This 207-nucleotide RNA was probed chemically with 2A3. Conditions: 150 mM KOAc, 10 mM MgCl2 and 150 mM bicine (pH 8.5), 24 C. Values cover nucleotides 27 to 156. As a SHAPE reagent, 2A3 marks flexible, mostly unpaired nucleotides at the ribose 2'-OH. The 2A3 profile rests on 479 reads.

RNA sequence: GGGAACGACUCGAGUAGAGUCGAAAAAUGGAUUCGACAGGGGUCCCCCGAGCUCAUUAAGCGUGUCGGAGGGUUGGCUUCGUCAUCAACACACACAGUUUAUAAUAACUGGCAAAUCAAACAAUAAUUUCGCAGUAGCUGCCUAAUCGCACUCUGCCAGAUAGUUCAGCUUCGGCUGAACUAUCUGAAAAGAAACAACAACAACAAC
Reactivity to 2A3 in 0.01 (KOAc 150mM, MgCl2 10mM, bicine 150mM(pH8.5), 24C), signal-to-noise 1, nucleotides 027 to 156: a000u070g040g000a030u130u090c100g030a020c090a110g000g010g000g030u060c000c050c000c000c020g060a020g020c040u040c070a110u220u300a080a000g020c020g030u050g080u080c040g000g030a080g060g050g040u260u140g020g030c000u000u020c020g020u000c000a020u050c030a050a080c020a000c020a020c000a010c040a070g000u000u010u080a210u010a190a040u080a060a000c000u000g010g060c050a000a120a040u080c060a200a090a080c070a020a160u170a140a120u040u200u040c010g000c010a060g050u300a070g050c110u010g000c000c000u060a080a030u110c010g000c000a000c000u000c000u000g000c000
For 2A3 the reverse transcriptase was SuperScript II with manganese.